The data come from the RNA Mapping Database (RMDB), library OK2TRN. Chemical mapping of a 177-nucleotide RNA with DMS and 2A3. 2A3 adducts were read by reverse transcription with SuperScript II with manganese.
[RMDB]
RNA sequence: GGGAACGACUCGAGUAGAGUCGAAAAGCGCAUCGGGCGUGCGCCAUGCGGGCGGCCAACGCCGCCAGUCCGCGCCGAUGCCGUUGUCGAUGCAGCACGCCUGCAACGCGUCGAACGUCGCAUGUGAGUACGCGCAUUUAUUCGUAAAUGCGCGUACAAAAGAAACAACAACAACAAC
Reactivity to DMS in 0.01 (KOAc 150mM, MgCl2 10mM, bicine 150mM(pH8.5), 24C), signal-to-noise 4, nucleotides 027 to 126: g010c130g010c000a020u000c010g010g000g010c030g050u000g000c060g020c090c050a040u000g010c020g030g000g010c010g010g010c000c040a110a180c300g010c010c010g010c010c000a040g010u000c120c060g000c010g010c020c030g000a030u010g020c030c030g020u020u000g000u020c010g000a060u010g020c010a060g000c080a100c140g000c100c040u000g020c030a050a030c070g010c050g010u000c040g010a070a090c110g010u010c040g000c040a030u000g010u010g000a210
Reactivity to 2A3 in 0.01 (KOAc 150mM, MgCl2 10mM, bicine 150mM(pH8.5), 24C), signal-to-noise 2, nucleotides 027 to 126: g040c040g010c010a000u040c040g070g050g000c020g040u030g010c030g020c020c020a020u180g000c050g000g000g000c000g040g000c030c080a180a040c150g010c030c030g050c000c020a010g040u000c020c010g020c020g060c000c000g010a020u020g040c010c000g030u080u140g090u120c020g010a060u070g000c000a000g000c010a040c190g070c000c020u010g020c040a050a080c050g000c020g050u030c020g010a090a060c020g070u090c000g050c010a020u050g050u020g100a060
Description:
The 2A3 profile rests on 2,804 reads. For DMS, 4,010 sequencing reads were counted. Conditions: 150 mM KOAc, 10 mM MgCl2 and 150 mM bicine (pH 8.5), 24 C. Reactivities are given for positions 27 through 126.